[RMDB]
RNA sequence: GGGAACGACUCGAGUAGAGUCGAAAAGCUCUGUAAUGGGAUGGGAUCCGAAGCCCCAUUGAGGGAUAAUACAGGCUCACCCAUCCAACUCCUAUUCCAACACGUCCUCGUCGUACAGAGUGGUAACUAAGGUAUAGCUCCUUCGGGAGCUAUACAACUUCAUAAAACGGUUCGCCGUUUUAUGAAGAAAAGAAACAACAACAACAAC
Reactivity to DMS in 0.01 (KOAc 150mM, MgCl2 10mM, bicine 150mM(pH8.5), 24C), signal-to-noise 3, nucleotides 027 to 156: g000c010u000c020u010g000u000a060a100u000g010g000g000a030u000g010g010g020a090u000c040c070g020a120a130g020c050c000c000c020a300u000u010g020a120g000g010g000a110u000a060a110u010a110c070a180g000g020c030u000c070a120c000c010c000a030u020c010c050a070a060c060u000c020c020u000a080u000u000c030c050a100a100c070a090c040g010u000c010c010u000c020g020u000c030g040u000a040c010a030g000a040g010u000g010g010u000a070a170c060u010a090a110g010g010u000a010u000a030g010c010u000c000c000u010u010c300g040g010g000a020g000c000u010a000u000a000c000a060a070
Reactivity to 2A3 in 0.01 (KOAc 150mM, MgCl2 10mM, bicine 150mM(pH8.5), 24C), signal-to-noise 5, nucleotides 027 to 156: g020c000u010c010u020g040u040a130a140u130g140g020g000a010u010g000g000g030a040u020c040c020g040a110a030g040c020c010c020c020a100u130u220g070a300g010g000g010a020u080a140a040u120a170c100a040g010g000c030u040c050a070c000c000c000a000u000c000c010a020a030c010u040c010c030u040a100u100u070c030c010a070a020c040a020c110g070u080c010c020u070c030g090u030c040g000u040a000c000a010g000a010g020u060g030g060u110a120a090c110u050a070a100g090g000u000a000u000a000g000c000u000c000c010u020u040c080g050g000g000a000g030c000u000a000u000a000c000a000a000